[RMDB]
RNA sequence: GGGAACGACUCGAGUAGAGUCGAAAAGAUAUGGAACUAGAGUGGGUGCUCUGCCGAAGAACUGAAUGUUGGUCGGAAACGACCAACAUUCAGGGAGGCAGAGAACUACACCGCUAGUUCCUAAGUCCAUCUUAAGUGGGUUCGCCCACUUAAGAUGAAAAGAAACAACAACAACAAC
Reactivity to 2A3 in 0.01 (KOAc 150mM, MgCl2 10mM, bicine 150mM(pH8.5), 24C), signal-to-noise 1, nucleotides 027 to 126: g030a030u130a050u260g010g000a000a000c000u020a020g030a020g100u200g040g040g000u030g020c030u000c000u010g000c000c010g270a280a050g040a150a030c000u010g030a000a000u010g010u010u010g030g000u030c020g010g050a170a050a080c010g000a000c010c010a000a000c000a000u000u020c000a010g000g000g020a010g000g000c000a010g000a000g000a000a000c000u050a020c020a010c000c030g020c070u000a000g010u000u020c010c000u000a020a000g000u000c010
Reactivity to DMS in 0.01 (KOAc 150mM, MgCl2 10mM, bicine 150mM(pH8.5), 24C), signal-to-noise 2, nucleotides 027 to 126: g010a070u010a300u010g000g010a010a000c000u000a010g000a300g020u000g010g010g010u000g010c010u000c000u000g020c000c000g020a090a210g020a190a240c000u000g010a010a010u000g020u000u000g010g000u000c000g010g000a060a100a250c020g020a030c000c020a000a000c000a000u010u000c000a000g000g000g000a080g020g030c010a010g010a010g010a000a020c000u000a150c010a010c020c100g010c010u000a000g010u000u010c000c000u000a010a100g010u010c050
Structure probing data (2A3 and DMS) for a 177-nucleotide construct. Conditions: 150 mM KOAc, 10 mM MgCl2 and 150 mM bicine (pH 8.5), 24 C. In probing experiments dimethyl sulfate is read out at A N1 and C N3, which are open when not base-paired. Source: RMDB library TTRINS, as collected in RNAgym. The DMS profile rests on 2,908 reads.